[RMDB]
RNA sequence: GGGAACGACUCGAGUAGAGUCGAAAAUGGGUACAAGUGGGGUGCUAGACCCCCAAAAAGUCCCCUCAAAAGGGACACAUCUAAGGGCUUGAUAGUCUAUGAUGAAUGACACCAAGAGUUGGCUGAUCAUGGAGAAUAAGUUCGCUUAUUCUCCAUGAAAAGAAACAACAACAACAAC
Reactivity to 2A3 in 0.01 (KOAc 150mM, MgCl2 10mM, bicine 150mM(pH8.5), 24C), signal-to-noise 1, nucleotides 027 to 126: u030g030g040g000u090a080c060a080a110g130u220g090g000g000g000u010g030c000u050a130g150a110c020c000c010c000c020a010a010a010a010a010g000u000c080c030c000c010u050c030a170a200a000a000g000g030g000a010c030a000c020a030u000c010u030a010a180g090g010g030c020u050u160g190a110u210a130g020u020c000u000a030u080g020a000u010g030a090a150u050g020a000c000a000c080c010a090a000g050a000g060u030u030g110g040c050u030g000a030u040
Reactivity to DMS in 0.01 (KOAc 150mM, MgCl2 10mM, bicine 150mM(pH8.5), 24C), signal-to-noise 2, nucleotides 027 to 126: u020g020g050g040u000a120c120a120a100g020u030g020g000g000g030u000g020c160u010a110g000a160c030c000c010c000c010a020a050a020a200a040g020u000c000c000c000c040u020c300a020a070a090a130g010g000g000a030c030a230c000a040u000c010u010a070a090g020g000g010c010u010u040g010a100u010a030g020u000c010u020a300u010g020a010u010g000a110a110u010g020a090c090a100c010c050a050a020g000a130g020u000u000g000g010c010u000g000a200u010